[RMDB]
RNA sequence: GGGAACGACUCGAGUAGAGUCGAAAACACCGGCCGUACGCGGCCGGUGAAGUAUUGACGAGUACUACCGUAGAAGUAUUCAGGUCUCAUAACUACGGAUAAACAUGGCAGGUACGCCUGCCAUGAAGGAGUGCAUAUAUUUCGAUAUAUGCACUCCAAAAGAAACAACAACAACAAC
Reactivity to DMS in 0.01 (KOAc 150mM, MgCl2 10mM, bicine 150mM(pH8.5), 24C), signal-to-noise 2, nucleotides 027 to 126: c030a000c000c000g030g030c010c010g070u040a030c250g000c020g060g000c000c040g030g000u000g010a000a000g000u030a100u000u030g010a140c210g000a020g000u000a000c000u000a140c060c020g000u020a000g020a160a030g000u000a020u000u000c010a260g000g000u000c010u000c000a080u020a140a140c000u000a030c010g000g000a300u040a130a120a210c000a000u000g000g010c010a030g010g000u000a120c220g010c000c010u000g000c000c010a000u000g020a050a060
Reactivity to 2A3 in 0.01 (KOAc 150mM, MgCl2 10mM, bicine 150mM(pH8.5), 24C), signal-to-noise 5, nucleotides 027 to 126: c000a000c010c000g020g010c040c000g040u070a040c300g030c030g150g020c000c000g010g010u010g000a000a000g030u040a130u140u230g070a040c070g010a010g030u010a020c000u070a200c000c010g020u010a010g020a200a000g020u020a020u050u050c040a030g150g090u010c020u010c040a120u070a190a100c000u010a000c010g040g000a060u170a060a070a020c010a000u010g000g000c000a000g000g040u060a020c220g050c020c000u000g000c000c000a000u000g000a010a020